[RMDB]
RNA sequence: GGGAACGACUCGAGUAGAGUCGAAAAGGAGAUCGAGCGACAGUUCGUGCGCGGCGACCUGAAGUUGCUUCGGCUUCUUCUUGUUCGCGUCCUGAGUGGAACUGCUCCUUCUUCACACCAGCCGGAGGCAUUAGUAUCGCUUCGGCGAUACUAAUGCAAAAGAAACAACAACAACAAC
Reactivity to 2A3 in 0.01 (KOAc 150mM, MgCl2 10mM, bicine 150mM(pH8.5), 24C), signal-to-noise 5, nucleotides 027 to 126: g000g000a030g010a030u040c040g010a000g000c050g170a130c050a090g040u050u020c050g070u150g060c070g000c020g070g040c030g010a010c000c010u010g000a010a000g010u020u020g000c010u020u060c230g090g000c000u000u000c010u010u000c000u020u040g070u120u050c010g000c000g040u060c010c040u040g060a060g040u100g040g060a040a030c030u060g010c010u000c010c000u020u030c000u000u030c020a050c030a050c030c020a000g080c040c040g100g070a070g140
Reactivity to DMS in 0.01 (KOAc 150mM, MgCl2 10mM, bicine 150mM(pH8.5), 24C), signal-to-noise 4, nucleotides 027 to 126: g000g000a010g000a020u000c110g010a010g010c040g020a120c120a020g010u000u000c020g030u010g020c030g030c020g010g010c020g000a020c020c010u000g000a010a030g010u000u000g000c000u000u000c210g030g000c000u010u000c000u000u000c000u010u000g000u000u000c010g010c010g010u000c050c080u010g000a070g030u000g010g010a010a030c020u000g010c010u010c010c030u000u010c010u000u000c020a100c120a210c020c040a130g010c100c040g000g000a190g000